Source: RMDB library M2RFPK, as collected in RNAgym. Chemical mapping of a 207-nucleotide RNA with 2A3.
[RMDB]
RNA sequence: GGGAACGACUCGAGUAGAGUCGAAAAACGGUCGUACGCGACCGAGGCGCGGCUAGGUCGACGGACCGAACAAUGGCAUCCCGCAUUCUGCCAUCCGCCGCGCAGCUUCUUCUCAAACGGCGCGGAAAAAAGUAGGACACCUUCGGGUGUCCUACAACUUCACACAUGACUUCGGUCAUGUGUGAAGAAAAGAAACAACAACAACAAC
Reactivity to 2A3 in 0.01 (KOAc 150mM, MgCl2 10mM, bicine 150mM(pH8.5), 24C), signal-to-noise 1, nucleotides 027 to 156: a000c030g010g000u030c010g040u050a010c240g040c020g080a000c010c000g000a050g000g030c000g000c000g010g000c000u000a020g010g000u020c040g110a190c180g060g020a000c000c000g000a000a000c000a010a020u010g000g000c000a030u070c020c000c000g000c020a100u270u110c060u090g020c000c000a010u000c020c020g000c020c030g010c010g000c000a000g000c010u080u120c030u040u010c000u030c020a040a110a150c070g040g000c030g010c150g020g000a150a000a000a000a000a000g000u000a000g010g000a000c000a000c000c000u100u170c300g020g000g000u000g020u000c000c000u000a000c000a000a000